[RMDB]
An RNA of 177 nucleotides, treated with 2A3 and read out base by base. The RNA was probed in 150 mM KOAc, 10 mM MgCl2 and 150 mM bicine (pH 8.5) at 24 C. Source: RMDB libraries RFM100 and RFMREP, as collected in RNAgym.
RNA sequence: GGGAACGACUCGAGUAGAGUCGAAAAGACUCUGUCCGUCUCAGCUGUGGCGUUGCUCUGGGCGGCGUUCUGCUGGCCGAGAUUUUCGUGACAGCUGAGACCCAGAGACAUGAUCACAACUCAUGGUGACUCCGUUAUCGUUCGCGAUAACGGAGUCAAAAGAAACAACAACAACAAC
Reactivity to 2A3 in 0.01 (KOAc 150mM, MgCl2 10mM, bicine 150mM(pH8.5), 24C), signal-to-noise 3, nucleotides 027 to 126: g020a000c000u000c000u000g020u070c050c060g000u000c000u000c000a000g020c000u000g000u040g050g000c000g020u020u000g000c020u010c060u120g050g000g030c020g000g030c010g100u300u060c040u220g000c020u030g260g110c010c010g050a030g000a070u100u160u040u010c000g000u020g200a020c000a000g000c000u000g010a000g000a000c020c000c000a000g000a000g010a020c000a000u040g000a000u070c060a000c020a180a090c070u020c040a050u020g060g050u040